This 177-nucleotide RNA was probed chemically with 2A3 and DMS. Values cover nucleotides 27 to 126. For DMS the reverse transcriptase was MarathonRT. It was measured as part of the RMDB library TTRDEL.

[RMDB]
RNA sequence: GGGAACGACUCGAGUAGAGUCGAAAAGAUAUGGAGCAGGACAUGAUGAGGGUCGGAAACGACCUAAUCAUCAACAGCCUGUCUCCUAAGUCAAACUCUCCAUUAUACUUCGGUAUAAUGGAGAGAAUCAUCAGUAGACGUUCGCGUCUACUGAUGAAAAAGAAACAACAACAACAAC
Reactivity to 2A3 in 0.01 (KOAc 150mM, MgCl2 10mM, bicine 150mM(pH8.5), 24C), signal-to-noise 2, nucleotides 027 to 126: g040a010u090a010u110g010g000a000g010c010a000g020g030a100c050a190u110g010a000u000g000a030g000g000g040u010c000g000g040a070a050a000c020g000a000c000c010u040a090a100u000c010a010u000c010a000a080c040a040g070c000c000u060g030u120c010u000c000c010u000a090a020g050u020c010a040a010a280c010u000c000u000c000c010a000u020u000a010u000a010c000u050u050c230g080g000u010a000u000a010a000u000g000g000a000g010a000g010a000a000
Reactivity to DMS in 0.01 (KOAc 150mM, MgCl2 10mM, bicine 150mM(pH8.5), 24C), signal-to-noise 3, nucleotides 027 to 126: g000a040u000a300u010g000g000a020g020c010a020g020g010a050c100a250u020g010a010u000g000a020g010g010g000u000c000g000g000a060a070a180c010g010a010c010c000u000a050a080u000c010a000u000c000a030a070c300a170g000c010c000u000g000u010c010u020c000c000u010a010a090g010u000c010a120a090a210c010u000c020u000c000c000a020u000u000a020u000a000c000u010u010c150g030g000u000a000u000a000a000u000g000g000a000g010a000g010a040a040
The DMS profile rests on 2,173 reads.